[RMDB]
RNA sequence: GGGAACGACUCGAGUAGAGUCGAAAAGAAAGAAAGAAAGAGGAGUUCUGGACCUGGCAUACAGUGUAGUAUUCUGUGUGCGUCCGUCUACAGCUACAUUGUCUGCUGGGUUUCAGGCCUCCACUAAAAGAUCGAGGACAUUCGUGUCCUCGAUCUUAAAAGAAACAACAACAACAAC
Reactivity to 2A3 in 0.01 (KOAc 150mM, MgCl2 10mM, bicine 150mM(pH8.5), 24C), signal-to-noise 1, nucleotides 027 to 126: g100a000a040a020g140a100a080a000g150a010a120a050g220a020g000g020a020g000u030u000c000u000g000g040a000c000c000u000g000g000c000a000u000a000c010a000g000u000g000u020a000g000u020a300u290u030c000u040g020u090g020u030g100c020g090u080c030c110g030u010c050u000a000c000a000g020c010u000a000c000a010u000u000g020u010c020u030g030c000u010g000g010g000u020u000u010c000a000g000g010c000c000u000c000c000a010c000u060a080a070